[RMDB]
RNA sequence: GGGAACGACUCGAGUAGAGUCGAAAAUUACGCAUCGAUAACUUCCAGCGACCAUCAUAUGCUUAAACGCACUGGAAAUGAUGCCACAUUUAGAGUGCGACAAAUUAAGGCACUGACACGCAUCGCAAUUAGCAGUCGAGUUCGCUCGACUGCUAAUAAAAGAAACAACAACAACAAC
Reactivity to 2A3 in 0.01 (KOAc 150mM, MgCl2 10mM, bicine 150mM(pH8.5), 24C), signal-to-noise 2, nucleotides 027 to 126: u120u100a000c080g000c000a020u050c030g140a140u030a110a090c070u010u000c000c000a010g000c000g040a040c040c030a000u150c040a000u230a030u200g100c020u080u090a110a000a000c110g000c030a050c000u000g020g090a000a000a040u140g070a000u150g010c020c000a050c000a000u010u070u010a130g040a000g080u010g000c000g040a030c110a000a060a130u290u290a050a090g030g070c030a000c000u010g000a000c020a000c050g030c000a040u100c050g000c090a030
Reactivity to DMS in 0.01 (KOAc 150mM, MgCl2 10mM, bicine 150mM(pH8.5), 24C), signal-to-noise 2, nucleotides 027 to 126: u000u040a150c240g020c030a020u000c000g000a210u040a050a130c180u030u010c030c000a070g090c090g030a090c190c060a080u020c120a110u030a070u020g000c060u030u000a050a090a050c040g000c020a060c030u000g010g000a000a000a120u000g000a010u010g000c100c080a140c140a020u000u050u030a070g000a000g000u030g000c030g000a100c110a090a080a050u020u030a110a070g000g000c000a030c050u020g000a110c030a120c080g000c000a070u010c040g020c030a050

This 177-nucleotide RNA was probed chemically with 2A3 and DMS.
The 2A3 profile rests on 1,299 reads.
Conditions: 150 mM KOAc, 10 mM MgCl2 and 150 mM bicine (pH 8.5), 24 C.
Values are in units of 0.01, from 0 to 300, in steps of 10.
For 2A3 the reverse transcriptase was SuperScript II with manganese.